Background:
An RNA of 207 nucleotides, treated with 2A3 and read out base by base. For 2A3, 2,298 sequencing reads were counted. Source: RMDB library OK3TST, as collected in RNAgym. The RNA was probed in 150 mM KOAc, 10 mM MgCl2 and 150 mM bicine (pH 8.5) at 24 C.
RNA sequence: GGGAACGACUCGAGUAGAGUCGAAAAGGAGCUCGAGUUGUUCUUAGCUCAACUAAGGGCAACUGUAUGUUCUUAAGCUGUUUAAGGGCAUAUAGUAGUGUGUAGUUGAGCUACACAUUAUUAAUAGGUUUUAAACAGCUUAAGGCCUGUUCGAGCAUAUGAUUUACGAUUUCGAUCGUAAAUCAUAAAAAGAAACAACAACAACAAC
Reactivity to 2A3 in 0.01 (KOAc 150mM, MgCl2 10mM, bicine 150mM(pH8.5), 24C), signal-to-noise 2, nucleotides 027 to 156: g120g020a060g010c000u000c000g020a000g020u000u000g010u000u000c000u000u010a000g000c000u030c170a050a170c050u060a010a030g050g000g000c010a020a010c020u030g040u090a100u120g030u040u020c010u020u000a000a010g010c000u000g020u010u000u000a030a010g050g060g020c030a010u060a000u020a210g010u010a010g010u010g000u000g010u010a010g050u060u300g090a020g020c000u000a000c000a000c000a000u000u030a010u030u040a090a090u030a100g190g020u010u020u000u010a000a000a000c000a000g000c000u010u000a000a000g000g000c000c010u040g060u060u050c030g000a000g000c000a010